Structure probing data (2A3 and DMS) for a 177-nucleotide construct. It was measured as part of the RMDB library OK1LIB.
RNA sequence: GGGAACGACUCGAGUAGAGUCGAAAAGAAAAGCACGAAACCAACAUCGUACGGCUGACGUGCGGUCAGCGUGUAAUGUUGAUACACGAACGUGCGCGUAGUCUGACACUGCGAGUCAGUAAAGAAAGGGUAAGUUACUCUUCGGAGUAACUUACCCAAAAGAAACAACAACAACAAC
Reactivity to 2A3 in 0.01 (KOAc 150mM, MgCl2 10mM, bicine 150mM(pH8.5), 24C), signal-to-noise 2, nucleotides 027 to 126: g170a010a110a000a000g000c030a000c020g030a100a030a000c030c000a000a000c000a000u000c030g000u020a010c010g210g020c000u000g000a010c000g220u300g190c070g000g000u030c040a030g010c010g030u030g000u000a000a090u020g000u000u080g030a050u050a160c150a010c140g120a100a070c010g000u060g000c000g010c000g080u130a030g010u030c080u050g000a010c030a020c080u090g050c010g000a010g000u020c020a030g030u170a000a060a030g090a010a130a070
Reactivity to DMS in 0.01 (KOAc 150mM, MgCl2 10mM, bicine 150mM(pH8.5), 24C), signal-to-noise 2, nucleotides 027 to 126: g030a000a070a040a090g000c030a000c000g010a070a120a100c240c000a030a010c040a000u000c100g000u030a000c010g000g050c010u020g040a040c010g000u010g070c280g070g000u000c040a000g000c000g000u000g020u000a110a000u000g000u000u020g000a090u040a120c160a030c230g020a110a170c010g010u040g000c000g020c220g030u030a160g000u000c000u030g000a020c010a090c090u040g000c150g000a050g000u020c010a010g000u010a120a100a030g060a090a070a070